[RMDB]
This 177-nucleotide RNA was probed chemically with DMS and 2A3.

RNA sequence: GGGAACGACUCGAGUAGAGUCGAAAAACCCAACCGGCAACUGGAGGCCAUCAACAUGUUCAUCGACGAAGUGGUUCUCGCAGGGAUUCUUACAGUAGGCCUCAUGGUCGCUUUCUUCGGUGGGGUCGGGAUAAACAUGGUUCGCCAUGUUUAUCCCAAAAGAAACAACAACAACAAC
Reactivity to DMS in 0.01 (KOAc 150mM, MgCl2 10mM, bicine 150mM(pH8.5), 24C), signal-to-noise 1, nucleotides 027 to 126: a010c000c000c000a100a080c090c060g000g000c040a050a070c060u000g000g030a080g000g020c000c010a050u010c090a070a110c100a130u010g020u000u000c140a110u020c130g030a140c080g020a120a060g010u000g010g010u010u000c010u000c060g040c100a040g010g000g010a090u000u000c080u000u000a040c170a050g020u010a070g020g010c000c000u010c010a090u010g020g020u000c000g000c150u000u000u010c100u020u000c020g030g070u010g010g000g010g000u010c020
Reactivity to 2A3 in 0.01 (KOAc 150mM, MgCl2 10mM, bicine 150mM(pH8.5), 24C), signal-to-noise 1, nucleotides 027 to 126: a010c030c000c000a010a020c010c010g070g000c030a090a020c070u050g040g000a010g000g000c010c010a060u080c010a000a100c010a120u170g020u210u120c000a030u120c160g020a030c060g050a060a010g010u040g130g000u160u100c030u050c040g040c010a040g020g000g020a000u080u030c020u000u170a070c020a080g080u180a100g030g000c010c020u010c050a070u090g060g000u000c020g040c080u190u080u000c030u070u060c060g020g030u000g010g000g000g000u040c050
For 2A3, 1,085 sequencing reads were counted. For DMS, 733 sequencing reads were counted. Reactivities are given for positions 27 through 126. DMS adducts were read by reverse transcription with MarathonRT. The reactions ran in a buffer of 150 mM KOAc, 10 mM MgCl2 and 150 mM bicine (pH 8.5), at 24 C.